[RMDB]
RNA sequence: GGGAACGACUCGAGUAGAGUCGAAAAUACUUAGUACGCGCGUAGUUGCAGGCAUUCCGGGUGCAGCAACUGACGCGGAAGACUUUUCCCAGAGUGUGCGCUUCAACUGGCGUGCUCAGUAGUGCACGAAUUGCACGUACGUUCGCGUACGUGCAAAGACUACAUGUGUCUUCGGACACAUGUAGUCAAAAGAAACAACAACAACAAC
Reactivity to DMS in 0.01 (KOAc 150mM, MgCl2 10mM, bicine 150mM(pH8.5), 24C), signal-to-noise 1, nucleotides 027 to 156: u020a010c090u000u010a040g050u010a090c000g010c000g010c000g060u000a000g010u000u000g000c000a100g030g000c010a030u010u000c030c300g150g030g050u000g010c010a300g000c010a030a040c010u020g020a000c050g000c020g020g000a040a140g000a110c120u000u000u010u010c010c000c020a230g030a180g000u000g020u020g010c000g020c070u000u010c070a130a170c070u000g020g010c030g020u000g010c090u000c030a070g030u000a090g090u000g010c030a000c000g000a070a100u000u000g010c000a010c000g000u000a010c010g010u010u020c300g010c030g060u000a000c010g020u000g030c000a000a010a040
Reactivity to 2A3 in 0.01 (KOAc 150mM, MgCl2 10mM, bicine 150mM(pH8.5), 24C), signal-to-noise 2, nucleotides 027 to 156: u130a000c010u050u040a000g000u010a030c000g000c010g000c010g010u010a000g030u010u010g000c030a120g080g000c030a010u130u170c150c200g160g070g000u000g020c030a010g000c000a010a010c010u120g160a030c030g000c010g000g020a000a000g070a020c010u070u050u010u020c000c010c000a020g020a020g080u140g000u000g000c010g030c010u090u140c090a060a060c040u030g000g030c010g020u030g000c000u000c000a020g000u020a000g000u020g000c010a000c000g010a060a090u060u000g000c000a000c000g000u000a000c000g000u010u070c170g000c000g130u000a000c010g000u000g000c010a010a000a000